[RMDB]
This 177-nucleotide RNA was probed chemically with DMS and 2A3. For DMS, 1,606 sequencing reads were counted. For DMS the reverse transcriptase was MarathonRT. Conditions: 150 mM KOAc, 10 mM MgCl2 and 150 mM bicine (pH 8.5), 24 C.

RNA sequence: GGGAACGACUCGAGUAGAGUCGAAAAGUACACAUGAUCUAGCAUAUGUACGUACAGUAUACGAUCCAGAUCUAGGUACCAUGUCUAGUACAUGGCUAGUCGAGUACUAUGCUAGCUAGGUACCUAGCACAUGGUGCUCCUUCGGGAGCACCAUGUGAAAAGAAACAACAACAACAAC
Reactivity to DMS in 0.01 (KOAc 150mM, MgCl2 10mM, bicine 150mM(pH8.5), 24C), signal-to-noise 2, nucleotides 027 to 126: g010u000a010c010a010c050a040u000g010a140u000c110u010a000g000c030a040u040a030u030g000u000a010c030g020u000a100c170a150g010u020a300u010a060c170g010a120u000c040c030a120g000a080u010c020u000a010g010g000u000a080c000c020a120u000g020u000c000u010a040g030u020a060c060a090u010g010g020c000u010a020g020u020c150g010a110g010u010a050c070u000a100u000g000c040u000a000g000c040u000a250g000g010u000a000c000c000u000a040g010
Reactivity to 2A3 in 0.01 (KOAc 150mM, MgCl2 10mM, bicine 150mM(pH8.5), 24C), signal-to-noise 2, nucleotides 027 to 126: g000u020a030c080a010c000a060u060g020a110u100c040u070a040g100c030a040u090a020u110g010u030a020c030g020u000a020c040a090g160u190a050u030a260c170g110a120u030c060c010a020g000a100u020c000u000a010g000g030u030a020c020c000a000u030g050u020c010u020a020g060u070a060c030a140u070g020g000c010u030a040g080u070c040g180a020g080u020a100c040u030a020u070g030c000u000a000g000c000u020a030g000g000u000a030c000c000u010a020g000